[RMDB]
RNA sequence: GGGAACGACUCGAGUAGAGUCGAAAAGAGAGGAAAAUGUCGUUCCAUUUUCGUGUAUAAUGGAUAAUAAAGUGGAUUGUUACUGUAAAUGCAAUUAAGUCAUUGUACUGAACCUUAAUGACUAGUUCACUAUAGAAUUGAUGGUUUAUUACCUAAAGGUAGGUAUACGUUUCGACGUAUACCUACCAAAAGAAACAACAACAACAAC
Reactivity to 2A3 in 0.01 (KOAc 150mM, MgCl2 10mM, bicine 150mM(pH8.5), 24C), signal-to-noise 6, nucleotides 027 to 156: g050a000g030a030g030g090a060a080a010a030u120g010u020c020g020u020u010c010c000a020u040u060u040u080c080g020u070g020u090a020u040a120a090u070g030g050a040u050a160a040u060a060a210a020g040u050g050g010a050u030u070g020u030u060a080c050u040g070u160a010a040a080u110g010c040a010a050u070u040a100a010g000u000c010a010u030u050g030u020a050c050u070g050a050a050c020c030u040u080a050a010u060g020a020c010u010a020g030u040u060c030a020c040u060a050u040a190g100a080a050u080u080g040a020u060g030g020u020u070u050a080u040u150a040c010c010u110a060a050a080
Reactivity to DMS in 0.01 (KOAc 150mM, MgCl2 10mM, bicine 150mM(pH8.5), 24C), signal-to-noise 4, nucleotides 027 to 156: g010a140g010a110g000g010a060a070a100a110u010g000u000c030g030u000u000c010c010a200u000u010u010u000c030g030u010g010u000a060u000a080a080u000g020g020a070u010a060a090u010a030a060a120g030u000g000g000a100u000u000g020u010u000a110c040u000g040u000a050a100a130u000g010c060a040a040u000u010a040a110g010u000c010a050u010u000g020u000a300c080u000g000a020a090c060c090u000u000a030a080u000g000a060c050u000a060g020u000u000c030a080c040u000a110u000a120g000a070a100u000u000g020a100u000g010g010u000u010u000a060u030u000a070c020c020u000a090a060a120